[RMDB]
RNA sequence: GGGAACGACUCGAGUAGAGUCGAAAACUCAGCACGGCUGAGCCGAACCACGGCGACUCUGGUGAACUUAUGGCGCUCGAAUCCCCGGCAUCCGGGAUGGCCGAUGGCCGUCGGGCCGCUGCGGGUCACGUAUAAGCAAGUUCGCUUGCUUAUACGUAAAAGAAACAACAACAACAAC
Reactivity to DMS in 0.01 (KOAc 150mM, MgCl2 10mM, bicine 150mM(pH8.5), 24C), signal-to-noise 8, nucleotides 027 to 126: c010u000c020a050g010c020a170c160g020g020c020u000g000a050g010c050c030g000a130a140c080c050a080c060g020g010c030g000a040c050u000c030u010g010g010u000g000a090a080c070u000u000a090u010g010g010c050g010c040u000c050g000a090a140u000c070c020c010c030g000g010c100a100u000c030c040g010g000g010a040u000g010g010c020c020g000a120u010g020g020c030c010g010u000c030g010g010g000c050c030g020c050u000g010c070g000g000g000u000c090
Reactivity to 2A3 in 0.01 (KOAc 150mM, MgCl2 10mM, bicine 150mM(pH8.5), 24C), signal-to-noise 7, nucleotides 027 to 126: c010u010c010a010g010c040a050c150g280g000c020u030g020a010g030c010c010g030a050a030c030c010a050c040g020g000c010g020a040c020u010c030u090g060g010u090g060a070a020c020u130u080a070u230g050g000c040g000c040u020c030g110a130a140u120c020c010c000c000g000g020c060a070u090c050c020g070g000g030a070u050g040g000c020c020g190a170u110g040g000c010c000g030u010c000g000g010g000c020c040g010c020u030g010c050g010g010g010u050c030

An RNA of 177 nucleotides, treated with DMS and 2A3 and read out base by base. Values cover nucleotides 27 to 126. Source: RMDB library OK2TST, as collected in RNAgym. For DMS, 17,924 sequencing reads were counted. Conditions: 150 mM KOAc, 10 mM MgCl2 and 150 mM bicine (pH 8.5), 24 C. 2A3 is a SHAPE reagent: it acylates the 2'-hydroxyl of flexible nucleotides of all four kinds. For 2A3, 17,634 sequencing reads were counted.